[RMDB]
RNA sequence: GGGAACGACUCGAGUAGAGUCGAAAAGCAUGUUUAUGUGAACCUAAGGAUGAAUAUCAGUGACUGUAGAUUAGAAGAACUGAUUAUAGCAUCGGCUGCUUGGUGUUCACUUUAUUUGCAUCUGUGAGUUUCCAACAAGCCCUAAGUUUACUGACAAAUUAUCCUCAUUAUUCGUAAUGAGGAUAAUAAAAGAAACAACAACAACAAC
Reactivity to 2A3 in 0.01 (KOAc 150mM, MgCl2 10mM, bicine 150mM(pH8.5), 24C), signal-to-noise 6, nucleotides 027 to 156: g020c020a010u030g030u050u090u080a120u140g000u010g010a010a000c000c010u000a040a010g070g000a010u030g040a040a050u060a000u080c010a010g010u040g170a180c040u070g050u210a100g100a300u160u150a060g110a260a010g010a030a020c000u010g010a010u080u100a080u040a080g040c010a020u030c040g140g020c110u140g010c010u070u000g030g000u130g010u080u000c000a000c000u020u030u000a070u010u070u060g000c020a030u020c050u040g050u020g060a050g060u030u070u050c020c010a020a020c020a070a050g020c020c000c010u080a080a020g000u010u020u120a130c030u050g070a010c040a030a190
Reactivity to DMS in 0.01 (KOAc 150mM, MgCl2 10mM, bicine 150mM(pH8.5), 24C), signal-to-noise 3, nucleotides 027 to 156: g030c020a060u010g020u000u000u000a050u020g040u010g010a080a080c030c020u000a070a070g010g030a050u010g010a120a140u000a070u000c020a020g010u000g000a120c030u010g000u010a180g010a210u010u010a130g010a120a110g010a190a120c020u010g010a050u000u010a090u000a140g010c030a050u000c040g040g010c070u000g030c050u000u000g000g000u010g010u010u000c030a030c030u000u000u000a040u010u000u000g010c040a100u010c080u000g020u000g010a100g030u000u010u000c020c050a070a080c070a060a090g000c010c000c020u000a050a170g010u010u010u000a080c040u000g010a110c100a050a100
This 207-nucleotide RNA was probed chemically with 2A3 and DMS. The reactions ran in a buffer of 150 mM KOAc, 10 mM MgCl2 and 150 mM bicine (pH 8.5), at 24 C. Values are in units of 0.01, from 0 to 300, in steps of 10. Reactivities are given for positions 27 through 156. The DMS profile rests on 7,227 reads. It was measured as part of the RMDB library OK3TST.